[RMDB]
RNA sequence: GGGAACGACUCGAGUAGAGUCGAAAAGUUUUUAACGCGUGUGGACCCGCUAACACGAAUUACCCAGUUAUUUUCGACUUUACUCGAGUCGUUAUAGCGUGAGUUGGCGGAGUUCUCCGCGAAAUAACAAAUCAAUACAAUUCGUUGUAUUGAUUUGAAAAGAAACAACAACAACAAC
Reactivity to DMS in 0.01 (KOAc 150mM, MgCl2 10mM, bicine 150mM(pH8.5), 24C), signal-to-noise 6, nucleotides 027 to 126: g010u010u010u010u010u010a040a110c110g020c020g020u000g020u000g010g010a070c040c020c020g010c030u000a070a040c020a060c040g010a090a090u000u010a120c060c040c030a130g000u000u010a080u000u000u000u000c000g000a020c000u000u000u000a000c020u000c020g000a000g010u000c000g000u010u000a020u010a080g010c050g010u000g010a070g010u000u000g000g010c010g010g000a100g010u000u010c050u000c010c010g010c010g000a020a050a050u010a080a160

About this RNA:
The record gives the reactivity of an RNA of 177 nucleotides to DMS. Values cover nucleotides 27 to 126. The RNA was probed in 150 mM KOAc, 10 mM MgCl2 and 150 mM bicine (pH 8.5) at 24 C. Source: RMDB library M2PK90, as collected in RNAgym. For DMS, 10,556 sequencing reads were counted. DMS adducts were read by reverse transcription with MarathonRT.